Description:
Chemical mapping of a 207-nucleotide RNA with 2A3. Source: RMDB library RNAMAK, as collected in RNAgym. For 2A3, 1,124 sequencing reads were counted.
[RMDB]
RNA sequence: GGGAACGACUCGAGUAGAGUCGAAAAGCGUACUACUUUCGCGAAUACAGCGACAUGGCGGAGGACUUCUCCCAAAUAGGAGAAGUUGAAACCAACAGCGCUGUAUAGCGAAAGUAUCGCAAAUCCUUGAAAAUCCGUUCGCGGAUUUUCAAGGAAACUACUACAAGUCCUUCGGGACUUGUAGUAGAAAAGAAACAACAACAACAAC
Reactivity to 2A3 in 0.01 (KOAc 150mM, MgCl2 10mM, bicine 150mM(pH8.5), 24C), signal-to-noise 2, nucleotides 027 to 156: g010c000g070u110a100c090u000a000c000u070u010u010c010g010c010g000a160a070u030a010c000a000g000c000g180a210c180a280u070g000g010c030g000g020a040g100g110a000c000u010u000c010u060c010c040c020a250a270a110u300a140g000g000a000g000a000a000g000u010u030g050a030a040a010c000c000a000a060c060a050g050c000g000c010u010g000u030a010u000a000g000c000g000a010a000a000g000u000a000u000c000g000c000a000a130a030u010c010c000u000u000g000a010a000a000a020u000c000c020g000u050u160c300g040c050g180g000a000u040u000u020u000c010a020a000g000g030a000a040a000